[RMDB]
RNA sequence: GGGAACGACUCGAGUAGAGUCGAAAAGCGUGACGGCACAGUGGAUCAGCCCAUUUGAUUAUCUUCAGCAGUCACCUCUUGCCCGCUUUGCGCCGCCCGGUGCGCCGGGACAUCUGCUGGGGACCGACCUACUAGUAGGCUUCGGCCUACUAGUAGGAAAAGAAACAACAACAACAAC
Reactivity to 2A3 in 0.01 (KOAc 150mM, MgCl2 10mM, bicine 150mM(pH8.5), 24C), signal-to-noise 9, nucleotides 027 to 126: g060c060g020u030g050a020c030g010g030c010a020c030a100g090u090g060g030a110u090c040a050g060c000c020c030a060u140u090u100g170a170u070u210a060u080c030u040u020c020a010g000c000a010g040u070c040a070c050c020u070c040u080u100g030c000c010c000g020c070u160u160u160g010c030g010c010c010g060c030c030c030g030g010u060g000c040g010c010c010g000g000g020a040c000a050u040c020u020g000c000u010g000g000g020g000a010c010c040g080a060
Reactivity to DMS in 0.01 (KOAc 150mM, MgCl2 10mM, bicine 150mM(pH8.5), 24C), signal-to-noise 4, nucleotides 027 to 126: g020c170g050u010g000a040c080g000g040c020a090c090a060g010u000g000g010a070u000c080a120g000c050c040c020a090u030u020u010g020a110u030u020a120u020c020u000u020c010a060g010c010a020g000u000c070a060c090c040u000c070u010u010g010c010c010c010g000c160u000u020u010g030c020g000c030c010g020c080c060c090g010g010u000g020c110g030c090c040g000g000g000a090c060a050u020c010u010g000c030u000g000g000g000g010a020c100c090g000a200